[RMDB]
RNA sequence: GGGAACGACUCGAGUAGAGUCGAAAAGAUAUGGAACACUAACCGUUAGUAUGUCUAGCAACAGCGGUAGGUCGGAAACGACCUGACCGACAUGCUAAGUCAUACUAACGGUUAGUGUUCCUAAGUCGAUCCUAUUUUUCUUCGGAAAAAUAGGAUCAAAAGAAACAACAACAACAAC
Reactivity to DMS in 0.01 (KOAc 150mM, MgCl2 10mM, bicine 150mM(pH8.5), 24C), signal-to-noise 2, nucleotides 027 to 126: g010a120u000a300u000g010g010a030a020c000a000c000u000a010a000c000c010g000u000u010a020g030u000a000u000g010u000c000u000a010g020c020a060a100c300a260g000c010g010g000u000a030g010g000u010c000g010g000a120a070a250c020g010a010c000c000u000g000a010c000c000g000a030c110a190u000g000c010u010a000a110g010u000c000a000u000a000c010u010a000a000c000g000g000u000u020a000g000u000g000u000u000c000c010u010a030a100g010u010c090